[RMDB]
Structure probing data (2A3 and DMS) for a 207-nucleotide construct. For DMS the reverse transcriptase was MarathonRT. Source: RMDB library OK3TST, as collected in RNAgym.
RNA sequence: GGGAACGACUCGAGUAGAGUCGAAAAGGGAUGUUGCGUAAAUCUCGCCGAGGCUUGAACCGCUAACGUAUUCCGCGCACCAGGAUUUAGGAUCGUGAUACUGAUCGUUAGUUAAUUCAGCGUUUGUGUAUGCUCUGAAAAUUGCUUCAGCCAUUGCAUAGCGGCUAAUUUUCGAAUUAGCCGCUAUAAAAGAAACAACAACAACAAC
Reactivity to 2A3 in 0.01 (KOAc 150mM, MgCl2 10mM, bicine 150mM(pH8.5), 24C), signal-to-noise 2, nucleotides 027 to 156: g080g020g010a120u080g030u140u150g060c050g040u060a150a060a020u090c100u020c070g070c030c010g030a080g020g010c120u120u120g040a070a090c020c050g010c030u000a000a020c030g090u060a070u140u020c000c010g010c030g000c040a020c000c020a050g120g020a180u020u230u160a120g030g010a070u080c000g010u030g020a060u030a160c080u060g060a020u120c000g000u000u030a090g000u010u080a010a030u150u050c000a000g050c090g010u000u090u100g050u020g020u030a090u130g000c000u020c000u050g020a060a070a110a140u190u170g020c020u020u060c030a010g000c000c040a110u030u070g000c060
Reactivity to DMS in 0.01 (KOAc 150mM, MgCl2 10mM, bicine 150mM(pH8.5), 24C), signal-to-noise 2, nucleotides 027 to 156: g020g000g040a210u010g020u000u010g020c000g000u010a120a130a140u010c050u000c040g070c030c030g010a110g020g030c040u010u010g020a050a070c050c120g050c030u000a030a030c020g010u010a100u000u000c100c040g010c090g060c050a070c020c030a130g020g010a060u000u000u000a140g040g030a040u000c030g010u020g020a110u000a020c040u000g000a080u000c030g020u000u020a100g040u030u000a030a140u020u000c000a080g000c040g030u010u000u000g020u000g030u010a080u000g000c060u010c020u020g000a050a060a080a190u000u000g000c040u000u000c060a080g000c140c050a140u000u000g020c150